The data come from the RNA Mapping Database (RMDB), library M2PK90. An RNA of 177 nucleotides, treated with 2A3 and DMS and read out base by base.
RNA sequence: GGGAACGACUCGAGUAGAGUCGAAAACAGUUAUGUGCGUCCCUCCCGAAGCUGGGCGCUCGGUCGAAGAGGACGACCAUCGCCGAUAGAGGACGACCGGUCUUCGGUCAAGGGAAUAAGAGUAAAAAUUUCACUCUAUAUUCGUAUAGAGUGAAAUAAAAGAAACAACAACAACAAC
Reactivity to 2A3 in 0.01 (KOAc 150mM, MgCl2 10mM, bicine 150mM(pH8.5), 24C), signal-to-noise 7, nucleotides 027 to 126: c020a020g040u220u200a190u240g130u140g050c040g040u010c000c000c000u020c010c000c000g010a020a010g010c010u030g020g030g000c010g010c030u030c060g020g000u030c030g020a100a050g070a130g120g060a050c050g050a040c020c010a090u060c030g010c040c010g020a020u070a110g110a040g040g030a080c020g010a010c000c010g040g030u090c020u050u040c020g000g020u010c050a020a030g030g020g040a020a060u130a110a050g050a010g090u150a060a070a050a040
Reactivity to DMS in 0.01 (KOAc 150mM, MgCl2 10mM, bicine 150mM(pH8.5), 24C), signal-to-noise 9, nucleotides 027 to 126: c050a110g010u010u010a070u010g020u010g020c120g010u000c000c000c010u000c140c000c010g000a040a060g020c020u000g000g000g010c030g020c060u000c040g020g020u000c020g010a110a150g010a100g000g000a170c120g000a050c050c030a150u000c040g010c130c010g000a070u000a110g000a100g000g010a090c030g000a040c030c010g010g000u010c020u000u000c010g010g000u000c170a090a070g000g000g000a040a060u010a070a120g010a120g000u010a030a050a070a090

2A3 adducts were read by reverse transcription with SuperScript II with manganese.